[RMDB]
Source: RMDB library OK3TST, as collected in RNAgym.
The record gives the reactivity of an RNA of 207 nucleotides to 2A3.
RNA sequence: GGGAACGACUCGAGUAGAGUCGAAAAGAUGGGUCCGAUGGAUUAAUGCGUCGCCAGCCAUUGGAUCCUGAUUGAUAGAUUGACGGCGACGGUCGGAUCACUCGGUAAUUCGGUGCUCUACGAGUGAUCCGUGAUGAUAGUUAAGAUGAGCACCUAACGUAUAGUGGCCUUUCGAGGCCACUAUACGAAAAGAAACAACAACAACAAC
Reactivity to 2A3 in 0.01 (KOAc 150mM, MgCl2 10mM, bicine 150mM(pH8.5), 24C), signal-to-noise 1, nucleotides 027 to 156: g050a010u130g000g000g000u000c030c000g020a000u000g000g000a010u060u160a220a060u270g160c000g000u010c000g000c020c000a060g000c000c000a000u000u000g000g000a000u000c000c000u020g010a000u050u070g030a050u110a180g130a080u090u190g120a040c060g050g000c000g010a000c040g000g000u030c040g000g000a000u010c000a000c000u000c000g060g050u160a080a040u130u190c030g030g000u020g040c000u030c000u030a000c000g000a000g000u020g000a000u000c000c000g000u000g050a050u090g000a000u020a150g180u160u130a100a000g020a030u120g000a000g060c010a000c000c000u000a010a010
About this RNA: For 2A3 the reverse transcriptase was SuperScript II with manganese. The 2A3 profile rests on 591 reads.